[RMDB]
RNA sequence: GGGAACGACUCGAGUAGAGUCGAAAAAGCCGCAUACGUGCGGCAACCUCUACCUCCCGGCAGAGGAGGCUGCAGAGGCUGGCUUUCCAAAACUCUGCCCCCUCCGCUGCUGCCAAGUGGCUGGUAACAGGAGAUCUCACUUCGGUGAGAUCUCCUGAAAAGAAACAACAACAACAAC
Reactivity to 2A3 in 0.01 (KOAc 150mM, MgCl2 10mM, bicine 150mM(pH8.5), 24C), signal-to-noise 1, nucleotides 027 to 126: a000g020c000c000g000c010a000u050a060c250g090u000g000c010g000g000c000a000a020c000c000u020c040u040a010c000c000u010c000c000c000g000g030c010a020g010a010g020g000a000g010g010c050u040g000c000a000g000a000g010g000c060u020g080g000c090u050u140u140c030c000a080a090a080a100c030u070c000u000g050c010c020c000c000c000u000c000c010g050c090u050g000c000u000g000c030c000a200a110g120u140g090g000c120u010g000g010u000a070a030
Structure probing data (2A3) for a 177-nucleotide construct.
Reactivities are rounded to 0.1 and cut off at 0 and 3.
The 2A3 profile rests on 773 reads.